[RMDB]
RNA sequence: GGGAACGACUCGAGUAGAGUCGAAAACACACGUGUUCACCCCACCCUCUGGCACAGGGUGCACAUACAGUAGGGGCAGAAAUGAACCUCAAGUGCUUAACACAAUUUUUAAAAAAUAUAUAGUCAACAUGUAGUACGUAUUCGUACGUACUACAUGAAAAGAAACAACAACAACAAC
Reactivity to DMS in 0.01 (KOAc 150mM, MgCl2 10mM, bicine 150mM(pH8.5), 24C), signal-to-noise 6, nucleotides 027 to 126: c100a090c170a110c250g040u000g020u010u000c120a160c040c000c010c070a130c030c000c010u000c070u000g000g010c050a080c300a060g010g000g020u000g010c100a020c110a100u000a090c200a080g040u010a030g010g000g000g030c020a020g000a090a070a100u000g000a040a060c010c000u000c040a100a110g020u000g010c020u000u020a080a050c070a070c050a060a020u010u020u000u010u020a010a010a120a050a040a090u020a110u010a130u010a120g000u010c050a060a180
Reactivity to 2A3 in 0.01 (KOAc 150mM, MgCl2 10mM, bicine 150mM(pH8.5), 24C), signal-to-noise 5, nucleotides 027 to 126: c030a000c020a010c100g080u030g010u080u060c040a100c000c010c000c000a010c000c000c000u020c050u050g000g010c010a010c010a030g010g020g000u010g010c030a030c000a090u300a040c050a010g190u220a050g040g000g010g000c010a010g060a050a080a030u050g010a020a040c000c000u010c020a070a050g000u000g020c000u070u130a120a010c040a000c020a110a100u110u080u190u300u300a160a130a030a010a040a000u300a040u110a050u130a220g110u050c010a020a040
Chemical mapping of a 177-nucleotide RNA with DMS and 2A3. For 2A3, 7,202 sequencing reads were counted. The reactions ran in a buffer of 150 mM KOAc, 10 mM MgCl2 and 150 mM bicine (pH 8.5), at 24 C. DMS adducts were read by reverse transcription with MarathonRT.